[RMDB]
RNA sequence: GGGAACGACUCGAGUAGAGUCGAAAAACUAGUAUGUACAGGGGUGAGUUGACCUGUCAUCUAGACUGCUGACCAUCAACUCCCCGGUCAGCUGGAUGAUGUCCACAGAGUACGACAUCAGUACUCAGAGUAAUGAUGCGUUCGCGUAUCGUUACUCAAAAGAAACAACAACAACAAC
Reactivity to DMS in 0.01 (KOAc 150mM, MgCl2 10mM, bicine 150mM(pH8.5), 24C), signal-to-noise 9, nucleotides 027 to 126: a130c010u000a010g010u050a010u000g000u050a020c000a010g010g000g000g020u020g010a120g020u010u000g010a070c000c010u000g000u000c000a010u000c000u000a010g000a200c090u010g000c010u000g000a010c000c030a170u040c170a080a110c120u010c020c000c010c170g000g000u000c000a000g000c000u010g000g000a090u010g010a080u010g010u000c010c060a120c220a110g000a050g010u000a030c040g010a120c160a080u040c120a100g010u010a020c010u000c020a150
Reactivity to 2A3 in 0.01 (KOAc 150mM, MgCl2 10mM, bicine 150mM(pH8.5), 24C), signal-to-noise 9, nucleotides 027 to 126: a000c000u010a000g050u130a050u050g060u090a010c000a010g020g020g030g050u180g110a130g050u060u070g090a070c000c000u000g000u000c000a000u000c000u000a010g050a090c050u020g000c000u000g000a000c000c000a040u110c020a030a070c030u060c000c000c000c010g000g000u000c000a000g000c010u010g030g010a050u070g010a020u080g060u030c020c010a060c070a090g040a010g050u050a020c050g080a020c100a150u100c040a040g010u020a020c020u020c060a020